[RMDB]
RNA sequence: GGGAACGACUCGAGUAGAGUCGAAAAGAGUGGUCCCCAGAUUAUCAUCAUUGGUAACACCUAGUUGGUGCAUUACUAACUUGUUAGAAAUGCACAUUCUCAGGCGCCAUUCAGACUUCAUAAAUCAAACAGUUAUUCUAUUCGUAGAAUAACUGUUAAAAGAAACAACAACAACAAC
Reactivity to 2A3 in 0.01 (KOAc 150mM, MgCl2 10mM, bicine 150mM(pH8.5), 24C), signal-to-noise 9, nucleotides 027 to 126: g040a010g020u050g020g020u070c030c000c000c000a030g060a200u040u090a030u110c030a010u010c010a030u060u170g010g000u040a070a020c010a030c050c010u020a030g040u030u070g130g000u010g000c000a000u000u010a010c000u000a020a020c020u070u130g040u100u030a010g010a020a020a000u010g000c010a000c000a030u070u000c030u010c040a020g020g000c020g000c020c000a000u020u030c020a020g040a090c020u080u050c130a100u120a220a120a090u130c080a050
Reactivity to DMS in 0.01 (KOAc 150mM, MgCl2 10mM, bicine 150mM(pH8.5), 24C), signal-to-noise 9, nucleotides 027 to 126: g000a050g020u000g010g010u000c060c020c020c050a150g000a160u000u000a030u000c040a050u010c200a140u010u010g010g010u000a040a080c110a200c030c020u000a050g010u000u000g010g040u000g000c000a000u000u000a090c010u000a010a010c040u000u010g010u000u000a010g000a070a010a010u000g000c000a010c000a090u000u000c020u000c160a040g010g030c260g010c020c020a030u000u000c040a100g010a110c100u000u000c100a080u010a060a080a090u010c130a100